This 177-nucleotide RNA was probed chemically with DMS and 2A3. The data come from the RNA Mapping Database (RMDB), library OK2TST. The DMS profile rests on 4,112 reads.

RNA sequence: GGGAACGACUCGAGUAGAGUCGAAAACGAUAACUUGAAUGAGUAUGAGCCUGCCGAUUAUGAAUUGGGCUUUUUGCACCUGUACUUAGGGCUAAAUUAUGUGCGCAAUAAUGAUCUGGAUGGUGCAAUAUUUACUGACCUUCGGGUCAGUAAAUAUAAAAGAAACAACAACAACAAC
Reactivity to DMS in 0.01 (KOAc 150mM, MgCl2 10mM, bicine 150mM(pH8.5), 24C), signal-to-noise 4, nucleotides 027 to 126: c080g000a110u010a070a070c060u010u000g010a150a060u020g000a070g010u010a080u000g000a130g000c010c010u000g010c020c030g010a050u000u010a040u010g010a090a100u000u010g000g010g030c030u000u010u010u000u000g010c030a080c000c010u000g020u020a100c200u000u010a050g010g010g010c040u000a050a050a050u010u000a060u010g020u000g010c050g010c030a030a030u000a050a040u010g020a060u000c030u010g010g010a140u000g010g010u000g020c040a080
Reactivity to 2A3 in 0.01 (KOAc 150mM, MgCl2 10mM, bicine 150mM(pH8.5), 24C), signal-to-noise 2, nucleotides 027 to 126: c010g030a060u090a130a090c030u110u090g150a140a070u230g020a080g040u060a090u070g020a010g000c000c000u050g060c030c040g030a030u050u040a030u160g130a150a150u000u040g060g040g000c030u040u030u010u020u030g120c200a300c050c000u040g000u190a110c030u090u090a020g040g000g020c040u020a050a100a070u160u170a090u180g130u060g010c130g000c080a010a020u090a050a000u080g020a000u030c050u090g020g000a050u040g040g000u050g000c010a020